[RMDB]
RNA sequence: GGGAACGACUCGAGUAGAGUCGAAAAGCACCGCGGUGGGAGCGGGCACCUCGGGGUGCCGGACCUUCACCGCUCCGUCCACGAGCGUAGCCUGCGCGGGAACCCACCGCCCGUCGGGUGUGCGGAGCGUGUUCUCGUAUUUCGAUACGAGAACACGAAAAGAAACAACAACAACAAC
Reactivity to DMS in 0.01 (KOAc 150mM, MgCl2 10mM, bicine 150mM(pH8.5), 24C), signal-to-noise 4, nucleotides 027 to 126: g020c040a080c030c030g020c010g010g030u000g000g000g020a150g030c020g010g000g020c010a030c010c000u000c050g000g010g000g020u000g000c300c010g010g010a050c110c030u000u010c230a150c300c130g000c180u000c010c000g010u000c010c000a040c010g010a020g000c160g000u000a120g010c010c000u000g010c020g010c120g000g010g000a120a160c020c010c000a030c030c010g000c000c010c020g010u000c070g000g000g010u010g010u010g020c050g010g010a180g010
Reactivity to 2A3 in 0.01 (KOAc 150mM, MgCl2 10mM, bicine 150mM(pH8.5), 24C), signal-to-noise 3, nucleotides 027 to 126: g010c010a020c060c090g000c010g020g010u010g000g020g010a100g030c020g000g000g000c010a010c000c000u000c010g040g000g000g010u050g080c110c000g000g010a030c000c020u120u130c120a070c080c060g010c040u010c000c010g000u000c010c000a040c020g000a010g010c100g030u030a070g010c000c000u010g000c020g000c040g050g050g020a080a080c020c000c000a010c000c000g000c000c020c000g080u050c050g060g120g050u080g020u050g030c060g020g010a040g100
This 177-nucleotide RNA was probed chemically with DMS and 2A3. Source: RMDB library OK2TRN, as collected in RNAgym. For DMS, 4,446 sequencing reads were counted. Values cover nucleotides 27 to 126. In probing experiments dimethyl sulfate is read out at A N1 and C N3, which are open when not base-paired.